[RMDB]
RNA sequence: GGGAACGACUCGAGUAGAGUCGAAAAGGAUUUUGGCAUCGGCUUCGCGCCCGCUGAGGGCUUCAGCGUCGUGCUGGCAGUGCUGGUGCGCCCGGCCAGGAUGCUGCCGGCAAUGACCGCGCAUGUGUCGCGGUCAAUUCUUCGGAAUUGACCGCGAAAAAGAAACAACAACAACAAC
Reactivity to 2A3 in 0.01 (KOAc 150mM, MgCl2 10mM, bicine 150mM(pH8.5), 24C), signal-to-noise 2, nucleotides 027 to 126: g030g020a060u040u000u180u270g060g010c040a050u060c090g060g000c000u040u050c070g000c030g020c020c070c000g040c100u120g030a120g010g030g080c000u060u000c050a060g000c050g070u030c020g010u030g000c000u010g000g030c010a020g020u060g140c000u000g010g020u060g060c070g170c010c010c000g060g000c000c020a040g000g060a110u250g010c010u000g000c020c000g000g020c020a050a100u110g030a020c030c040g000c010g010c070a120u150g100u030g030
Reactivity to DMS in 0.01 (KOAc 150mM, MgCl2 10mM, bicine 150mM(pH8.5), 24C), signal-to-noise 2, nucleotides 027 to 126: g000g000a090u010u000u010u010g030g010c030a080u000c070g010g010c040u000u000c100g030c090g000c030c010c030g000c100u000g020a150g000g010g020c080u000u010c070a070g020c030g010u010c040g000u000g000c010u000g000g000c010a010g020u000g000c010u000g000g010u000g000c100g000c020c030c000g010g010c000c010a030g030g000a090u000g020c010u000g000c010c010g000g000c020a040a040u000g000a050c060c070g010c060g010c110a090u000g020u000g010
Chemical mapping of a 177-nucleotide RNA with 2A3 and DMS. The DMS profile rests on 3,391 reads. Reactivities are rounded to 0.1 and cut off at 0 and 3. The reactions ran in a buffer of 150 mM KOAc, 10 mM MgCl2 and 150 mM bicine (pH 8.5), at 24 C.